[RMDB]
Chemical mapping of a 207-nucleotide RNA with 2A3. As a SHAPE reagent, 2A3 marks flexible, mostly unpaired nucleotides at the ribose 2'-OH.
RNA sequence: GGGAACGACUCGAGUAGAGUCGAAAAUUGCAUCAUACUAACUUAGAGUGGGCUAAUUUAGUAAAAGCAAACUUAGAAAAUGCCUGCUUAGCUGAAGCUAAUAUAAGUGAAGCAGACGCUAGAUGGGCUAAUAUGAAAAAUGCUAACUUAAGUAUGGUGCCUUCUAUGACUUCGGUCAUAGAAGGCAAAAAGAAACAACAACAACAAC
Reactivity to 2A3 in 0.01 (KOAc 150mM, MgCl2 10mM, bicine 150mM(pH8.5), 24C), signal-to-noise 1, nucleotides 027 to 156: u070u030g010c020a010u050c010a000u020a000c000u030a040a040c000u020u070a000g040a020g100u150g020g010g020c020u030a120a000u030u040u080a030g010u030a010a080a080a000g020c050a070a010a050c070u120u080a020g040a050a160a010a020u120g000c000c000u020g000c000u000u030a000g000c000u020g050a040a000g000c020u050a090a110u110a160u070a230a170g100u080g150a070a000g000c030a030g010a020c000g000c010u030a010g010a090u030g020g000g000c010u050a060a040u080a080u150g160a100a010a000a070a000u090g000c020u010a080a050c000u150u090a110a020g030u030a090u100g040g000
2A3 adducts were read by reverse transcription with SuperScript II with manganese.